[RMDB]
RNA sequence: GGGAACGACUCGAGUAGAGUCGAAAAGAAGCACUGGCACGUUUCCGCGAUGUUGUGAUGAAGGUGAAAAGAUCGCUCUUAAUUAGAUUAAAAACAUUUUUUUCUUCCUCUGUAAUUUUGCCUUGAAUAGGUUUACUAAAUUCGUUUAGUAAACCUAAAAAGAAACAACAACAACAAC
Reactivity to 2A3 in 0.01 (KOAc 150mM, MgCl2 10mM, bicine 150mM(pH8.5), 24C), signal-to-noise 3, nucleotides 027 to 126: g080a020a020g020c000a000c030u040g020g000c010a020c120g040u010u080u050c010c030g010c030g020a030u080g000u200u100g050u030g060a080u080g040a040a040g050g020u060g030a050a050a020a010g060a040u060c030g030c050u020c000u070u060a100a100u100u100a040g020a050u100u160a000a020a030a050a010c040a040u040u070u000u000u000u010u060c000u000u030c030c000u050c010u040g050u080a050a110u000u060u090u070g020c000c000u030u040g030a070a060
Reactivity to DMS in 0.01 (KOAc 150mM, MgCl2 10mM, bicine 150mM(pH8.5), 24C), signal-to-noise 4, nucleotides 027 to 126: g020a140a100g010c030a060c060u000g000g020c020a060c050g010u000u010u020c020c020g010c110g010a070u010g020u010u000g010u020g020a070u010g000a060a040g000g010u020g000a040a050a060a080g010a050u010c070g000c050u010c030u000u010a080a060u020u000a090g010a240u010u010a020a040a050a100a090c050a020u000u000u000u010u000u000u000c010u010u000c010c020u010c070u000g010u020a050a070u000u010u010u010g010c040c020u000u010g010a070a150